[RMDB]
RNA sequence: GGGAACGACUCGAGUAGAGUCGAAAAGGCUGGAGAGUACAGCCGUGCCGUGGACUGCUACCUCAAAGUGCGAGACUCUGGAAACAGCGGCCUGGCGGAGAAGUGCUGGAUGAAGGUGAGGACAGCAGGCCCUUUCUGGCCCUCCUUCUCCCUAGGAGGAUAGGCUAAAUUUCGAUUUAGCCUAUCCAAAAGAAACAACAACAACAAC
Reactivity to 2A3 in 0.01 (KOAc 150mM, MgCl2 10mM, bicine 150mM(pH8.5), 24C), signal-to-noise 5, nucleotides 027 to 156: g030g000c010u010g020g020a090g010a040g090u120a070c020a020g010c000c010g010u040g010c020c020g050u090g000g020a070c010u040g010c030u070a070c000c020u050c050a090a090a050g040u060g060c040g030a070g050a070c030u040c040u070g040g030a080a070a040c030a050g030c020g050g000c010c020u050g020g010c070g020g030a080g000a070a010g030u060g020c030u040g030g030a060u090g060a110a020g050g020u040g030a050g010g040a030c020a040g040c020a030g040g010c020c000c000u030u100u030c030u020g020g000c000c010c020u030c010c000u070u020c030u020c000c010c010u030a050g000g050a040
Reactivity to DMS in 0.01 (KOAc 150mM, MgCl2 10mM, bicine 150mM(pH8.5), 24C), signal-to-noise 3, nucleotides 027 to 156: g010g020c020u000g000g000a100g020a120g020u000a050c060a060g030c020c020g010u000g060c030c060g000u000g010g020a070c030u000g020c010u000a080c040c000u010c040a050a110a100g010u010g020c030g000a190g010a070c040u000c030u000g020g010a130a120a160c050a100g030c020g020g010c020c010u010g020g020c030g020g010a060g010a080a060g010u000g000c030u000g010g000a130u000g000a070a080g020g030u000g000a100g040g040a080c040a100g000c130a080g010g000c000c020c040u010u000u010c060u020g030g000c010c020c020u000c050c000u000u000c040u000c010c000c010u000a090g000g000a260